[RMDB]
RNA sequence: GGGAACGACUCGAGUAGAGUCGAAAACAGAACGUUAAACAAUAGGUGACUCGCCUGCCAUCAGCCCGCCAGCUGGCGGUUGUCAGGUUAAAUUAAAGAGCAUGGCUAAGUAUGUAGAACUGUCUGUAGAGGACUUGCGGACGCGGGUUCAACUCCCCAACGGUCAUUAGUUCGCUAAUGACCGUUGAAAAGAAACAACAACAACAAC
Reactivity to DMS in 0.01 (KOAc 150mM, MgCl2 10mM, bicine 150mM(pH8.5), 24C), signal-to-noise 1, nucleotides 027 to 156: c040a060g000a020a110c070g010u010u000a080a090a060c040a060a080u010a140g030g020u010g010a110c020u010c030g010c000c030u000g040c040c010a060u010c030a060g000c020c000c050g000c040c040a150g050c040u010g060g020c040g010g020u000u010g010u000c020a060g010g020u000u000a030a080a130u000u010a070a040a120g010a030g020c030a080u010g000g010c040u020a090a190g030u010a130u000g010u010a080g020a010a080c020u000g030u000c030u000g000u010a100g020a220g020g000a060c010u010u000g000c050g020g020a120c220g000c010g010g010g020u000u000c060a060a090c060u010c010c000c010
Reactivity to 2A3 in 0.01 (KOAc 150mM, MgCl2 10mM, bicine 150mM(pH8.5), 24C), signal-to-noise 2, nucleotides 027 to 156: c010a010g090a070a020c020g020u030u050a110a130a010c050a090a060u070a070g020g020u000g060a160c000u000c010g010c000c000u010g000c030c000a040u020c020a050g040c000c020c020g040c050c020a060g070c100u220g040g000c000g000g010u000u000g010u000c000a010g000g000u000u060a060a140a060u170u100a090a000a000g010a000g000c020a030u040g070g000c010u010a040a020g040u030a170u140g070u020a020g030a060a000c040u050g010u010c010u000g020u000a010g020a070g110g000a010c030u010u010g010c040g060g050a060c140g030c010g040g010g000u000u020c010a030a090c040u030c030c000c000

Conditions: 150 mM KOAc, 10 mM MgCl2 and 150 mM bicine (pH 8.5), 24 C. Structure probing data (DMS and 2A3) for a 207-nucleotide construct. For 2A3, 1,545 sequencing reads were counted.